Chemical mapping of a 177-nucleotide RNA with 2A3 and DMS. Reactivities are rounded to 0.1 and cut off at 0 and 3. DMS adducts were read by reverse transcription with MarathonRT.
RNA sequence: GGGAACGACUCGAGUAGAGUCGAAAACAAAGAAAGCAACGGGGCUAGCCGGUAGGUGUUCCGCCUCCCGAGAGGGGACGAGUGAGGCUUAUCCCGGGGAACUCGGCAAAUCGUCCCCACAUAGCAGCAAGUAUGAUAGGUUCGCCUAUCAUACUUGAAAAGAAACAACAACAACAAC
Reactivity to 2A3 in 0.01 (KOAc 150mM, MgCl2 10mM, bicine 150mM(pH8.5), 24C), signal-to-noise 3, nucleotides 027 to 126: c030a010a140a060g200a070a120a020g060c030a030a050c070g010g020g070g000c020u030a010g030c030c020g060g010u050a050g040g050u060g080u250u060c050c040g020c010c010u070c000c010c000g150a140g050a040g020g000g000g010a000c010g000a010g040u110g020a010g030g000c000u030u050a070u050c030c010c000g010g000g010g000a090a040c030u030c060g070g010c060a050a030a070u020c000g020u000c000c010c050c000a040c020a000u100a000g050c070a010g020
Reactivity to DMS in 0.01 (KOAc 150mM, MgCl2 10mM, bicine 150mM(pH8.5), 24C), signal-to-noise 4, nucleotides 027 to 126: c100a120a080a100g000a070a080a090g000c060a070a080c100g020g000g010g010c070u000a080g010c060c010g000g010u020a040g010g010u000g020u010u000c100c060g000c020c010u000c030c030c020g000a100g010a120g000g000g000g000a010c010g000a040g010u010g000a050g000g020c050u010u010a100u010c010c000c000g000g010g010g000a090a140c030u000c030g000g020c120a060a050a090u000c010g010u000c000c000c000c010a080c140a050u000a080g000c110a130g010
Source information: For DMS, 3,861 sequencing reads were counted. Conditions: 150 mM KOAc, 10 mM MgCl2 and 150 mM bicine (pH 8.5), 24 C. Source: RMDB library VIROID, as collected in RNAgym.